[RMDB]
RNA sequence: GGGAACGACUCGAGUAGAGUCGAAAACACGAGGACCAUAGAGCAUAGUCUUGGGAUCUCGUAUUGUUAAGAGAAACUGCCCAAUGCAGCUUCGUCUUGCUGUGCAACAAUAUUAGGGCAUGUAGCAACACACUAUGUACUUCGGUACAUAGUGUGUAAAAGAAACAACAACAACAAC
Reactivity to DMS in 0.01 (KOAc 150mM, MgCl2 10mM, bicine 150mM(pH8.5), 24C), signal-to-noise 6, nucleotides 027 to 126: c100a040c010g000a010g010g000a070c000c000a040u050a030g010a020g010c290a170u040a160g020u010c000u000u000g010g000g010a100u010c000u000c000g010u000a050u020u010g010u010u020a080a090g000a120g010a070a060a030c020u010g000c010c020c060a070a070u050g000c010a010g000c020u010u020c150g000u020c110u010u000g010c010u020g010u020g010c140a060a090c220a080a050u020a050u020u010a060g030g000g000c000a000u020g000u010a050g010c080a080
Reactivity to 2A3 in 0.01 (KOAc 150mM, MgCl2 10mM, bicine 150mM(pH8.5), 24C), signal-to-noise 3, nucleotides 027 to 126: c040a000c030g000a020g000g010a000c000c000a030u100a020g030a000g050c100a100u080a100g070u010c000u000u000g030g000g030a070u020c000u000c000g000u020a050u020u150g070u040u150a080a010g110a000g020a020a080a000c010u020g000c000c000c000a030a000u070g000c010a000g000c010u060u130c050g190u040c060u050u070g000c000u000g000u010g060c010a040a030c030a040a020u080a050u130u080a090g000g000g000c020a020u110g020u030a040g010c020a000